[RMDB]
Chemical mapping of a 177-nucleotide RNA with DMS and 2A3. Reactivities are given for positions 27 through 126. Values are in units of 0.01, from 0 to 300, in steps of 10. The RNA was probed in 150 mM KOAc, 10 mM MgCl2 and 150 mM bicine (pH 8.5) at 24 C.

RNA sequence: GGGAACGACUCGAGUAGAGUCGAAAACAUGCCGAUCCUGUGGAUAAAGUAACUAUUAUUCCUAGAGGUUUAUCUUUAGGAGCUACGCAUUUCCUUCCUGAGAAGAACAAACUUAGCUAUUGGAAAAUCUGUGUAACAAGUUCGCUUGUUACACAGAAAAAGAAACAACAACAACAAC
Reactivity to DMS in 0.01 (KOAc 150mM, MgCl2 10mM, bicine 150mM(pH8.5), 24C), signal-to-noise 1, nucleotides 027 to 126: c150a050u000g020c030c050g000a080u000c000c000u010g020u000g010g030a060u000a020a050a100g020u020a070a100c060u000a030u000u030a170u060u000c150c080u000a010g010a060g010g000u000u010u000a000u010c000u000u000u020a040g010g000a030g020c160u000a050c240g030c030a040u010u000u000c010c000u000u000c010c010u010g000a080g020a080a080g000a080a110c090a010a100a120c090u000u010a080g000c050u000a100u000u000g000g010a060a080a100a090
Reactivity to 2A3 in 0.01 (KOAc 150mM, MgCl2 10mM, bicine 150mM(pH8.5), 24C), signal-to-noise 2, nucleotides 027 to 126: c030a040u050g020c020c020g010a080u000c000c060u090g000u040g010g000a020u020a050a140a020g110u080a140a060c060u030a070u300u040a120u210u130c010c000u030a040g010a050g090g020u020u110u150a060u070c010u000u040u050a020g010g000a010g000c020u040a010c020g000c010a040u010u030u000c010c000u060u040c030c020u050g040a100g060a140a000g020a110a070c020a050a110a040c010u030u040a020g000c010u040a040u190u110g080g020a040a140a050a070